The data come from the RNA Mapping Database (RMDB), library OK1LIB. The record gives the reactivity of an RNA of 177 nucleotides to 2A3. Reactivities are rounded to 0.1 and cut off at 0 and 3. The RNA was probed in 150 mM KOAc, 10 mM MgCl2 and 150 mM bicine (pH 8.5) at 24 C.

RNA sequence: GGGAACGACUCGAGUAGAGUCGAAAAGCUCGGAGACGAGCAAGGCUGACAAAACCCUGUCCCAACCUCCACGUGGUGUCGGCUGGAUAAUGCUGCAUUAUGUUGCAUUUAUCAACUGGGAAGGAAAGGUCACUGCGUCAUUCGUGACGCAGUGACCAAAAGAAACAACAACAACAAC
Reactivity to 2A3 in 0.01 (KOAc 150mM, MgCl2 10mM, bicine 150mM(pH8.5), 24C), signal-to-noise 1, nucleotides 027 to 126: g000c000u030c000g020g010a110g030a030c030g000a000g000c010a000a010g040g000c050u000g000a000c110a000a030a060a210c000c000c000u010g110u000c020c000c000a000a040c000c020u080c060c030a180c110g110u180g000g000u010g000u000c000g000g000c000u000g010g030a000u030a060a010u000g000c000u030g000c030a030u150u070a090u300g010u030u010g020c000a000u220u180u040a030u050c000a000a000c050u000g000g000g070a040a010g000g000a000a040a030